[RMDB]
RNA sequence: GGGAACGACUCGAGUAGAGUCGAAAAUUGGUGACAACCUCCACGGCGCCUGAUUUUGUAGCAUUUAAUGUCUUUCAGGGCAUUGAAACGGCUGUUGGCCAUUAUGUUCAUGCUCGCCUGAAGGGUGAAACUGGUAUCUUCGGAUACCAGAAAAGAAACAACAACAACAAC
Reactivity to 2A3 in 0.01 (KOAc 150mM, MgCl2 10mM, bicine 150mM(pH8.5), 24C), signal-to-noise 9, nucleotides 027 to 129: u050u040g030g010u040g030a030c020a060a060c030c010u020c030c020a030c040g020g010c020g050c010c040u060g080a140u040u070u080u140g120u120a020g010c020a020u010u040u200a100a070u120g020u000c030u000u190u080c070a060g030g020g000c010a000u010u110g040a040a030a010c050g030g020c030u070g130u240u150g120g000c000c010a020u130u120a120u220g030u020u020c010a010u040g030c030u040c080g060c030c010u050g040a040a040g030g010g010u030g020a060a080a020
Reactivity to DMS in 0.01 (KOAc 150mM, MgCl2 10mM, bicine 150mM(pH8.5), 24C), signal-to-noise 7, nucleotides 027 to 129: u010u000g000g000u030g030a110c100a060a040c080c020u000c000c000a090c160g010g040c060g040c070c020u060g020a020u010u020u040u040g020u020a060g030c080a050u010u030u000a070a040u020g000u030c020u000u000u000c100a110g000g000g000c000a030u020u020g000a010a020a050c150g010g020c030u000g050u060u050g030g000c040c030a110u010u010a080u060g000u000u000c040a040u040g030c070u000c080g040c040c000u020g020a060a040g010g040g050u000g000a010a120a160